[RMDB]
RNA sequence: GGGAACGACUCGAGUAGAGUCGAAAAAUCAGCACCGGGCCGAUGAUGAUACCCCAGGGGCCGAACAUGGUGAUACCGGCGAACACCGACAGCAACAUCAGCGCCGAGUUCAGCCGCGCGUCGCGCGGCCAAUAGCCGAGUUCGCUCGGCUAUUGGCAAAAGAAACAACAACAACAAC
Reactivity to DMS in 0.01 (KOAc 150mM, MgCl2 10mM, bicine 150mM(pH8.5), 24C), signal-to-noise 4, nucleotides 027 to 126: a070u010c040a040g000c050a030c050c040g020g020g010c090c050g020a050u000g010a060u000g010a140u010a120c070c010c020c040a120g020g000g000g030c040c030g010a050a030c120a090u010g000g000u000g010a140u000a080c080c000g000g030c010g000a080a070c080a100c050c020g000a070c100a070g010c070a070a140c110a070u010c090a090g000c040g020c020c030g000a080g000u010u000c080a110g060c100c020g130c140g100c110g000u000c120g060c110g070c180g020
Reactivity to 2A3 in 0.01 (KOAc 150mM, MgCl2 10mM, bicine 150mM(pH8.5), 24C), signal-to-noise 2, nucleotides 027 to 126: a000u060c040a030g050c050a040c080c070g040g020g000c030c040g040a050u060g020a000u050g000a020u240a260c000c020c030c000a030g100g000g070g030c020c010g020a060a020c040a110u180g040g020u060g040a050u100a080c010c030g000g020c000g000a080a040c050a030c100c010g070a080c060a060g030c020a050a070c000a150u140c040a000g050c010g060c070c020g020a030g030u030u090c040a070g080c030c050g040c020g040c070g250u260c100g030c000g030c050g090
Description
Conditions: 150 mM KOAc, 10 mM MgCl2 and 150 mM bicine (pH 8.5), 24 C. Chemical mapping of a 177-nucleotide RNA with DMS and 2A3.